[RMDB]
RNA sequence: GGGAACGACUCGAGUAGAGUCGAAAACGGCAUAAUGGCGAAGCUCUCGAAAGCCCAGGCAAAGGCACAUCAGCAGGCAUGCGAACUCCUGCAGCAAGACCUGCUUUCCGAGGACGAAAAGUUCUUCGUGCUUGAAAACUGGCAGGAGUCGGCAUCGCGACGUUAACUCUUUCGAGAGUUAACGUCGAAAAGAAACAACAACAACAAC
Reactivity to DMS in 0.01 (KOAc 150mM, MgCl2 10mM, bicine 150mM(pH8.5), 24C), signal-to-noise 1, nucleotides 027 to 156: c080g020g000c030a050u000a090a120u000g010g020c000g040a080a150g020c060u020c030u000c080g000a070a110a080g070c020c030c000a100g010g020c000a040a110a070g040g050c030a060c120a070u030c100a110g010c010a010g140g050c070a130u000g000c020g000a020a070c020u000c030c020u010g030c030a220g030c000a110a060g030a230c010c050u000g060c020u010u000u020c020c050g000a030g000g030a130c030g000a110a050a130a220g010u000u020c030u000u010c040g010u000g000c000u000u000g000a070a090a090a050c090u000g000g010c020a060g010g000a100g030u000c060g040g000c000a060u010c060g030
Reactivity to 2A3 in 0.01 (KOAc 150mM, MgCl2 10mM, bicine 150mM(pH8.5), 24C), signal-to-noise 2, nucleotides 027 to 156: c020g050g010c070a070u080a130a060u170g060g000c030g030a050a020g030c010u020c010u040c060g080a100a040a010g030c000c010c010a020g060g000c060a040a070a080g020g010c030a060c010a150u100c040a060g050c010a020g060g000c050a020u060g010c000g060a050a050c010u000c000c010u030g000c000a010g010c020a050a010g020a050c010c000u000g010c000u050u040u030c070c040g030a010g000g000a000c000g060a080a100a160a110g010u030u020c000u030u020c040g010u020g010c000u000u020g010a000a030a060a100c030u020g050g000c000a010g020g010a000g010u020c010g040g010c020a040u050c090g010
The record gives the reactivity of an RNA of 207 nucleotides to DMS and 2A3. Values cover nucleotides 27 to 156. The reactions ran in a buffer of 150 mM KOAc, 10 mM MgCl2 and 150 mM bicine (pH 8.5), at 24 C. The DMS profile rests on 2,341 reads. It was measured as part of the RMDB library OK3TST. Reactivities are rounded to 0.1 and cut off at 0 and 3.